[RMDB]
RNA sequence: GGGAACGACUCGAGUAGAGUCGAAAAAGGCACCACCGCUGCCGAGUUAGGUGUCACACUCACCGGCCAAGCGUUACGCUGGCCGGGAUUGCCGCUGAGUAUCCUGGUGAACGGGGUCACCGUGGAAAAUCCCCGUACCUUUCGAGGUACGGGGAUUAAAAGAAACAACAACAACAAC
Reactivity to DMS in 0.01 (KOAc 150mM, MgCl2 10mM, bicine 150mM(pH8.5), 24C), signal-to-noise 1, nucleotides 027 to 126: a130g020g010c060a030c030c010a070c140c090g020c090u000g000c070c050g010a100g020u000u000a150g000g010u000g000u000c030a140c100a020c110u000c050a190c000c000g000g000c000c000a040a100g070c000g010u010u000a100c120g040c010u000g000g010c000c000g020g000g010a040u000u000g000c020c040g000c070u000g000a080g020u000a110u020c020c000u000g000g030u020g010a010a190c110g000g000g010g040u000c000a030c000c040g010u000g000g000a090a110
This 177-nucleotide RNA was probed chemically with DMS. The data come from the RNA Mapping Database (RMDB), library OK2TST. Reactivities are rounded to 0.1 and cut off at 0 and 3.